[RMDB]
RNA sequence: GGGAACGACUCGAGUAGAGUCGAAAACACCCGCUCGGCCAGGCGAACAUAGCCGGUCGCAUCCCGCAUAUACCGUUCGCGCAAUUGCGGUUUGCCGGGAUGAGGCAGGAUCUGAUCGACGCCACGGGAUUAGGCAAUAGUUCGCUAUUGCCUAAUCAAAAGAAACAACAACAACAAC
Reactivity to 2A3 in 0.01 (KOAc 150mM, MgCl2 10mM, bicine 150mM(pH8.5), 24C), signal-to-noise 6, nucleotides 027 to 126: c050a050c000c010c020g010c070u100c060g060g010c040c050a080g050g000c010g010a030a010c020a030u080a020g040c000c010g000g000u000c000g000c000a000u000c010c000c000g010c020a010u070a010u050a180c010c010g040u070u110c100g020c020g010c270a120a230u210u190g010c000g020g000u010u030u030g050c080c020g000g000g000a000u000g000a010g000g000c010a010g000g030a070u060c030u080g070a050u030c030g020a020c020g000c010c020a040c050g090g000
Reactivity to DMS in 0.01 (KOAc 150mM, MgCl2 10mM, bicine 150mM(pH8.5), 24C), signal-to-noise 6, nucleotides 027 to 126: c210a210c030c000c000g000c130u010c090g010g010c030c070a130g020g020c020g010a050a130c170a060u000a070g010c000c010g010g040u000c010g010c010a000u000c000c000c000g010c010a040u010a080u010a070c010c010g010u000u010c180g000c090g000c170a110a120u010u010g010c000g010g000u000u000u000g010c120c040g000g010g000a010u000g000a010g010g000c000a040g010g010a070u010c060u000g010a070u000c030g010a300c060g000c010c020a090c080g010g000

The data come from the RNA Mapping Database (RMDB), library OK2TST.
Structure probing data (2A3 and DMS) for a 177-nucleotide construct.
Values cover nucleotides 27 to 126.
2A3 adducts were read by reverse transcription with SuperScript II with manganese.